[RMDB]
RNA sequence: GGGAACGACUCGAGUAGAGUCGAAAAUUAUACCCGCAUAUCAUUCAGACCCUUUAUGGAACUGUCAUUCAACCCCAAAAAUCUAGUGCAAAUAUUGUCUUCAUUACUUAGGCUAAAAGAAAUAAGUUAUACAAUACACUCUUCGGAGUGUAUUGAAACUCUGAAUAAGGUUCGCCUUAUUCAGAGUAAAAGAAACAACAACAACAAC
Reactivity to DMS in 0.01 (KOAc 150mM, MgCl2 10mM, bicine 150mM(pH8.5), 24C), signal-to-noise 1, nucleotides 027 to 156: u000u020a120u000a170c030c000c040g090c120a130u000a090u000c020a120u000u000c030a200g020a230c000c010c040u010u000u020a060u010g000g000a090a040c070u010g000u040c070a190u010u010c040a040a140c000c010c010c040a060a120a160a070a140u010c050u000a060g020u010g020c050a030a070a160u020a040u000u000g020u010c010u000u000c050a070u000u000a060c040u020u000a080g000g040c040u020a030a170a090a120g010a080a100a060u000a070a030g000u010u010a120u000a090c020a020a000u000a000c010a010c000u000c000u000u000c300g030g030a040g000u000g000u000a010u000u000g000a100a080
Reactivity to 2A3 in 0.01 (KOAc 150mM, MgCl2 10mM, bicine 150mM(pH8.5), 24C), signal-to-noise 2, nucleotides 027 to 156: u170u060a050u090a210c000c010c000g020c020a130u130a080u130c070a060u200u130c030a020g050a120c010c040c020u110u100u150a080u150g040g020a080a080c010u030g020u050c010a020u140u150c070a040a070c040c000c000c000a070a130a000a000a030u010c020u070a030g010u050g080c000a000a150a050u110a090u150u120g050u070c010u000u040c040a030u030u020a070c030u020u060a040g020g020c020u070a050a050a200a000g080a050a080a090u130a090a000g010u020u030a050u040a100c000a000a000u000a000c000a000c000u010c000u000u030c090g000g000a000g010u000g000u000a000u000u000g000a000a000